[RMDB]
RNA sequence: GGGAACGACUCGAGUAGAGUCGAAAAAGGAAUCCACUCGGAGAUGAGCAGAGAAAUCACCUCCAGAGGACCCCUUCAGCGAACAGAAGACUCUCUUCCCGGUGGGAGGAAGCCCAUAGCGAUGGGGCCAUACGUCUUUCUUCGGAAAGACGUAUGGAAAAGAAACAACAACAACAAC
Reactivity to 2A3 in 0.01 (KOAc 150mM, MgCl2 10mM, bicine 150mM(pH8.5), 24C), signal-to-noise 1, nucleotides 027 to 126: a000g050g020a090a020u040c010c010a050c020u000c100g000g000a010g010a020u030g030a030g130c180a120g160a030g130a300a180a040u000c010a010c000c000u000c000c030a000g000a030g060g000a060c080c000c020c000u020u120c090a140g050c000g090a080a050c030a070g100a180a020g080a090c010u000c000u010c000u060u080c000c000c030g260g210u240g010g000g010a060g010g000a000a050g020c000c000c020a070u150a010g020c020g030a010u020g010g000g000g050
Reactivity to DMS in 0.01 (KOAc 150mM, MgCl2 10mM, bicine 150mM(pH8.5), 24C), signal-to-noise 1, nucleotides 027 to 126: a030g020g030a090a100u010c010c000a210c090u010c080g050g000a000g010a010u000g010a000g010c080a200g030a270g000a080a100a110u000c000a030c010c000u000c010c000a110g000a030g000g000a130c050c010c000c040u010u000c060a110g060c050g010a050a030c060a070g020a120a060g000a070c000u000c060u000c020u000u010c000c020c050g020g010u030g020g010g000a030g000g000a040a020g000c010c010c030a080u010a060g010c020g030a150u010g010g000g000g010

Source information
The record gives the reactivity of an RNA of 177 nucleotides to 2A3 and DMS. The RNA was probed in 150 mM KOAc, 10 mM MgCl2 and 150 mM bicine (pH 8.5) at 24 C. High 2A3 reactivity points to a flexible backbone, as in loops and unpaired stretches. The 2A3 profile rests on 769 reads.